[RMDB]
RNA sequence: GGGAACGACUCGAGUAGAGUCGAAAAGAAAGAAAGAAAGUACUGUUAGUGAUGAUUUUAAAAUUAAAGCAGAUGGGAAUCCCUCUGAGAAAGAAAAUGGAGAUUAAUCUUAAACUGAAACAGUAAAUCUAGUGCUAUCGUUCGCGAUAGCACUAGAAAAAGAAACAACAACAACAAC
Reactivity to DMS in 0.01 (KOAc 150mM, MgCl2 10mM, bicine 150mM(pH8.5), 24C), signal-to-noise 1, nucleotides 027 to 126: g010a060a030a060g000a070a080a080g000a050a010a160g000u000a000c000u040g000u010u000a060g000u000g000a090u000g000a000u000u000u000u010a000a070a110a070u020u050a030a120a100g000c010a060g000a010u030g000g000g000a170a070u080c000c010c010u000c000u000g000a240g020a050a040a100g010a160a070a060a040u060g030g000a160g070a050u000u030a000a000u010c000u000u000a000a030a030c050u000g040a100a010a020c020a000g000u050a030a020a060
Reactivity to 2A3 in 0.01 (KOAc 150mM, MgCl2 10mM, bicine 150mM(pH8.5), 24C), signal-to-noise 2, nucleotides 027 to 126: g010a000a030a000g120a010a160a000g110a160a050a000g010u010a010c000u010g000u050u040a030g000u020g090a020u070g030a010u060u120u060u280a060a080a040a030u130u080a030a030a000g090c000a000g060a130u210g050g000g040a100a300u210c040c000c000u000c000u060g080a060g090a040a090a000g090a000a120a020a040u180g040g000a140g080a140u110u110a010a020u010c000u010u100a110a000a000c000u020g150a010a010a010c000a000g010u020a000a090a140

The data come from the RNA Mapping Database (RMDB), library RFM100. The record gives the reactivity of an RNA of 177 nucleotides to DMS and 2A3. Conditions: 150 mM KOAc, 10 mM MgCl2 and 150 mM bicine (pH 8.5), 24 C. The 2A3 profile rests on 970 reads.